[RMDB]
RNA sequence: GGGAACGACUCGAGUAGAGUCGAAAAGAAAGCUCCUCAACCGUGUGGAGGAGAAUGGCUAUAACCACCGAAACCUGAGGAAACAGGAAGCCACAACGUAAGCCAUGUGGUUAGCACACGGAAGAAACAUUAUGCACGCCUUCGGGCGUGCAUAAUGAAAAGAAACAACAACAACAAC
Reactivity to DMS in 0.01 (KOAc 150mM, MgCl2 10mM, bicine 150mM(pH8.5), 24C), signal-to-noise 1, nucleotides 027 to 126: g050a000a040a070g000c020u000c000c000u000c000a150a030c000c080g000u000g000u000g030g000a040g000g000a000g040a150a000u040g000g030c100u070a220u000a080a160c040c000a260c060c040g000a200a040a200c000c000u010g000a180g000g060a010a050a070c000a000g000g000a100a100g010c040c000a000c000a000a080c170g000u040a120a040g000c120c040a130u000g000u080g040g010u000u080a170g030c010a000c000a000c000g040g000a220a100g000a200a030a130
Reactivity to 2A3 in 0.01 (KOAc 150mM, MgCl2 10mM, bicine 150mM(pH8.5), 24C), signal-to-noise 2, nucleotides 027 to 126: g170a000a180a010g040c000u000c000c000u000c000a150a300c020c000g020u010g000u030g000g010a030g010g000a000g010a000a100u080g060g010c020u080a000u000a200a070c000c030a000c000c020g040a150a000a040c000c000u000g020a000g050g300a130a010a020c050a000g020g000a000a090g000c000c010a000c010a150a150c060g110u140a200a090g140c060c000a030u000g030u010g010g000u070u000a000g010c010a000c000a000c040g050g060a010a000g070a010a060a000